RNA sequence: GGGAACGACUCGAGUAGAGUCGAAAACACGCACGUCGGAUGCGAAUACGGCGUAUUUCACUGGGCAAGACGUAUCCGUUGAAGAGCUUGAAGCCGAACAGUUCGACUAUGAGGCAAUCCACGAAAUGGAUAUGCGAAACUUGACGACGGCGCUCGGAAGGAGAGUAUCCUUCGGGAUACUCUCCUUAAAAGAAACAACAACAACAAC
Reactivity to 2A3 in 0.01 (KOAc 150mM, MgCl2 10mM, bicine 150mM(pH8.5), 24C), signal-to-noise 2, nucleotides 027 to 156: c090a040c020g010c000a150c010g090u080c010g000g020a010u050g050c030g030a130a130u210a100c020g010g000c050g040u000a110u010u210u090c080a060c020u100g040g020g000c110a090a120g080a060c030g040u080a050u010c020c010g000u050u040g130a110a050g000a040g060c020u040u060g100a040a010g000c040c000g030a070a100c070a040g020u120u060c000g050a070c070u020a030u300g050a050g000g080c040a000a030u080c010c000a120c190g170a060a100a190u100g010g000a000u040a300u090g000c010g030a160a000a000c030u030u040g030a000c000g020a020c010g020g030c050g030c000u000c100g000g070
Reactivity to DMS in 0.01 (KOAc 150mM, MgCl2 10mM, bicine 150mM(pH8.5), 24C), signal-to-noise 1, nucleotides 027 to 156: c120a140c160g030c010a040c010g050u000c000g000g000a220u010g050c070g000a120a050u000a160c000g010g000c010g000u000a080u000u000u010c080a080c070u000g000g080g000c000a140a120g020a180c030g010u000a090u010c000c000g030u010u000g010a110a230g010a060g000c030u010u000g000a070a070g040c000c000g050a040a060c200a130g020u020u000c010g020a000c000u010a050u000g020a210g010g040c030a120a090u000c030c040a100c010g010a070a110a300u000g010g000a020u000a080u000g000c000g030a070a070a100c000u000u000g000a300c000g000a080c030g040g000c040g000c000u000c050g010g000